[RMDB]
RNA sequence: GGGAACGACUCGAGUAGAGUCGAAAACAGAGCUAAUGAGCCACAUACCUACCCAAGGUGAAAGCUCCUUCUCUCGCCAUGUGUAACUCAUGAUUCUCAUGACCCCUGGUUGGAGAGAUCCGGACUAUAGACUAGAGGGUGUUCGCACCCUCUAGAACGAUGUAUAAUCGUUCGCGAUUAUACAUCGAAAAGAAACAACAACAACAAC
Reactivity to DMS in 0.01 (KOAc 150mM, MgCl2 10mM, bicine 150mM(pH8.5), 24C), signal-to-noise 3, nucleotides 027 to 156: c070a100g010a100g020c050u000a140a110u000g010a070g030c010c030a080c100a160u010a070c050c010u000a110c010c010c020a170a120g030g000u030g000a090a110a080g010c030u010c030c060u000u000c020u000c000u000c020g000c020c000a050u000g000u000g030u000a040a060c060u000c060a040u000g000a150u000u010c130u000c010a020u000g000a070c010c050c020c020u000g030g010u000u000g020g010a050g010a080g010a060u010c010c060g010g010a110c070u000a100u000a140g010a180c020u000a010g000a010g030g020g040u000g030u010u020c300g020c000a020c000c000c000u000c010u000a000g010a030a140
Reactivity to 2A3 in 0.01 (KOAc 150mM, MgCl2 10mM, bicine 150mM(pH8.5), 24C), signal-to-noise 4, nucleotides 027 to 156: c070a020g060a020g030c040u130a170a150u210g100a060g030c040c010a070c020a110u240a060c000c010u010a040c000c000c010a030a020g010g000u030g040a130a040a020g010c040u010c000c010u050u000c000u000c000u000c000g000c010c000a020u060g100u030g020u090a110a050c020u010c020a010u020g030a150u300u060c150u040c130a000u010g000a040c000c030c000c000u010g030g040u070u240g120g000a000g000a000g000a010u030c060c050g000g020a020c030u060a050u130a270g120a070c000u000a000g000a000g000g000g000u000g020u030u030c080g040c040a000c000c000c000u000c000u000a000g000a000a000